[RMDB]
The data come from the RNA Mapping Database (RMDB), library OK2TRN. The record gives the reactivity of an RNA of 177 nucleotides to DMS and 2A3. For 2A3, 626 sequencing reads were counted. DMS (dimethyl sulfate) methylates the pairing face of unpaired adenines and cytosines. For DMS, 1,653 sequencing reads were counted. 2A3 adducts were read by reverse transcription with SuperScript II with manganese. The reactions ran in a buffer of 150 mM KOAc, 10 mM MgCl2 and 150 mM bicine (pH 8.5), at 24 C.
RNA sequence: GGGAACGACUCGAGUAGAGUCGAAAACUCAGCAGUAGCUAUUCAAUAUUGGUUCCAAAGUGUGUUAUGGGGGAACUGGUUGGUUGAUGCUCCAUAUGUUAUGCGGUUGACUGAUGAAGGAUGAAAACCAGCUAUAAUCGUUCGCGAUUAUAGCUGGAAAAGAAACAACAACAACAAC
Reactivity to DMS in 0.01 (KOAc 150mM, MgCl2 10mM, bicine 150mM(pH8.5), 24C), signal-to-noise 2, nucleotides 027 to 126: c000u000c030a180g020c050a090g010u010a050g010c050u000a060u000u020c100a090a110u000a130u000u010g000g000u000u000c040c020a040a110a070g000u010g020u010g010u000u000a070u000g000g000g000g010g020a040a050c030u010g020g010u010u000g020g030u010u000g000a080u000g020c060u000c020c050a060u020a080u010g030u010u000a040u000g020c120g000g010u000u000g010a080c030u000g020a060u010g000a140a070g010g010a080u000g000a060a070a070a140
Reactivity to 2A3 in 0.01 (KOAc 150mM, MgCl2 10mM, bicine 150mM(pH8.5), 24C), signal-to-noise 1, nucleotides 027 to 126: c000u000c000a000g020c010a060g000u170a000g070c050u110a190u120u090c070a140a000u000a070u150u070g000g010u040u020c040c020a110a040a000g160u100g020u000g110u150u230a150u150g030g010g020g000g010a010a010c060u030g000g080u050u050g030g030u010u000g050a020u010g100c000u000c020c000a070u120a000u200g040u120u120a040u070g000c070g020g020u040u120g080a070c000u000g020a040u010g030a050a020g050g060a090u100g080a020a010a030a030